An RNA of 177 nucleotides, treated with DMS and 2A3 and read out base by base. Conditions: 150 mM KOAc, 10 mM MgCl2 and 150 mM bicine (pH 8.5), 24 C. The 2A3 profile rests on 22,477 reads. 2A3 adducts were read by reverse transcription with SuperScript II with manganese.
[RMDB]
RNA sequence: GGGAACGACUCGAGUAGAGUCGAAAAGAUAUGGACUAGCCAAGCUAUGAAGGUAUCAUUCUCGGAAACGAGAAUGAGUACUGGAGCUUGCUAGUCCUAAGUCAAAAUCCACCCUUCGGGGUGGAAACUAAGUAGUAGAGUUCGCUCUACUACUUAGAAAAGAAACAACAACAACAAC
Reactivity to DMS in 0.01 (KOAc 150mM, MgCl2 10mM, bicine 150mM(pH8.5), 24C), signal-to-noise 7, nucleotides 027 to 126: g000a040u000a300u010g000g000a020c000u000a000g010c150c120a010a010g010c000u000a210u000g020a200a220g000g000u000a060u000c000a010u000u000c000u000c000g000g000a070a090a130c010g010a010g010a010a000u000g000a040g020u010a010c010u000g000g000a010g020c000u000u000g000c000u000a000g010u000c000c000u000a010a080g000u010c030a090a070a140a160u000c000c000a010c000c000c000u000u010c220g030g010g000g020u000g000g000a000a020a120
Reactivity to 2A3 in 0.01 (KOAc 150mM, MgCl2 10mM, bicine 150mM(pH8.5), 24C), signal-to-noise 7, nucleotides 027 to 126: g010a000u040a030u100g000g000a000c010u020a010g140c280c160a020a000g000c010u100a210u300g220a300a170g050g000u010a010u020c010a000u000u000c000u000c000g000g030a070a050a020c010g000a000g010a000a010u010g010a010g000u020a000c010u030g080g010a000g010c010u010u000g000c000u010a000g010u000c000c000u000a000a000g000u000c000a000a000a010a170u000c000c000a000c000c000c010u030u100c300g070g000g000g000u010g000g000a010a000a000